[RMDB]
RNA sequence: GGGAACGACUCGAGUAGAGUCGAAAAUGCAAACUGUGGAAAAGGGUACACCCGUUCGAGAGGAAGUACCUCACCCUGUUCUACGGCCAACAAUGAACUCAGAACGGUAAGAAUAGCGUGACCUUUAGAAAUGCUUCGGUUAGCAGCGGUUACACCCACUCUUCACCUGCUUCGGCAGGUGAAGAGUAAAAGAAACAACAACAACAAC
Reactivity to 2A3 in 0.01 (KOAc 150mM, MgCl2 10mM, bicine 150mM(pH8.5), 24C), signal-to-noise 1, nucleotides 027 to 156: u080g000c010a020a000a060c110u020g050u040g020g000a000a070a230a230g000g000g000u050a070c050a140c060c110c210g110u100u110c140g060a040g000a080g000g100a040a110g040u170a060c000c000u010c040a000c000c080c000u000g000u040u000c000u010a070c030g070g000c070c010a040a000c040a110a130u080g010a040a060c050u060c140a100g000a000a000c000g100g000u100a040a020g060a010a050u040a280g060c060g070u060g000a000c000c000u050u020u120a080g010a100a100a020u190g000c000u000u050c020g050g050u250u010a020g070c010a000g000c000g200g000u080u120a060c060a100c170c000c000